[RMDB]
RNA sequence: GGGAACGACUCGAGUAGAGUCGAAAACAGGGGUCACUUGGCUCUGCUAUCUCCUAGAUCCGAGGGAAGGGCUUCGACUGGCCGCUGCUGGUGAAGGACUUCAACCUGCUUCGCUGGCUUGGUGCCAGCAUGCAAAGGACUUCGGUCCUUUGCAUGCAAAAGAAACAACAACAACAAC
Reactivity to DMS in 0.01 (KOAc 150mM, MgCl2 10mM, bicine 150mM(pH8.5), 24C), signal-to-noise 6, nucleotides 027 to 126: c070a080g010g010g000g010u000c050a100c090u000u000g000g010c030u000c020u000g000c070u010a110u000c070u000c030c040u000a090g000a070u010c070c070g010a080g010g010g010a100a050g010g000g010c040u010u000c040g010a110c080u000g010g010c020c110g010c110u000g010c010u010g010g030u000g000a040a020g010g000a050c050u000u000c170a080a130c140c090u000g000c030u000u010c070g010c010u000g000g000c020u000u010g010g020u010g010c010c010a040
Reactivity to 2A3 in 0.01 (KOAc 150mM, MgCl2 10mM, bicine 150mM(pH8.5), 24C), signal-to-noise 4, nucleotides 027 to 126: c020a000g030g020g010g040u060c020a030c140u090u120g050g000c000u010c010u040g010c020u050a110u070c050u020c020c000u040a110g010a160u050c060c040g010a080g020g010g050a030a060g050g020g020c000u040u040c030g130a080c040u020g020g010c030c050g100c120u090g000c010u000g000g020u020g010a020a010g030g040a020c000u070u020c080a050a080c010c020u030g030c020u060u060c030g000c030u010g010g000c030u020u110g110g040u130g020c000c010a020
The data come from the RNA Mapping Database (RMDB), library OK2TST. Structure probing data (DMS and 2A3) for a 177-nucleotide construct. 2A3 adducts were read by reverse transcription with SuperScript II with manganese. In probing experiments dimethyl sulfate is read out at A N1 and C N3, which are open when not base-paired. For DMS the reverse transcriptase was MarathonRT.